[RMDB]
Record summary
Chemical mapping of a 177-nucleotide RNA with 2A3 and DMS.
RNA sequence: GGGAACGACUCGAGUAGAGUCGAAAAGAUAUGGAUCUAUCCACACGUGGCGCAGAUAUCGGAAACGAUGUAGCCAAGUGUGGAGUAGAUCCUAAGUCAAAGGAUCUUCAGUUCGCUGAAGAUCCAAGUGACUUUUGUAGUUCGCUACAAAAGUCACAAAAGAAACAACAACAACAAC
Reactivity to 2A3 in 0.01 (KOAc 150mM, MgCl2 10mM, bicine 150mM(pH8.5), 24C), signal-to-noise 1, nucleotides 027 to 126: g040a010u070a060u180g000g010a020u000c000u010a000u020c020c000a010c010a000c010g040u020g000g000c010g010c160a060g070a300u120a020u150c030g000g010a030a050a060c010g000a020u020g020u060a080g000c000c000a010a020g000u020g020u000g010g000a000g000u000a000g000a010u000c000c000u000a060a010g020u000c070a080a040a090g020g000a010u000c010u010u000c010a000g060u030u150c270g070c130u000g000a000a000g000a000u000c000c010a000a010
Reactivity to DMS in 0.01 (KOAc 150mM, MgCl2 10mM, bicine 150mM(pH8.5), 24C), signal-to-noise 3, nucleotides 027 to 126: g000a040u000a300u000g000g010a020u000c000u010a030u000c000c000a010c000a010c010g010u000g000g020c000g020c250a090g000a060u000a010u000c000g000g000a140a100a160c000g000a020u000g010u000a270g000c000c000a020a020g000u000g010u000g000g000a010g020u000a010g000a000u000c000c000u000a030a040g010u000c040a050a120a140g020g000a010u000c000u010u000c000a000g010u000u010c290g020c000u000g000a000a000g000a000u000c000c000a010a020
Source information
The 2A3 profile rests on 5,912 reads.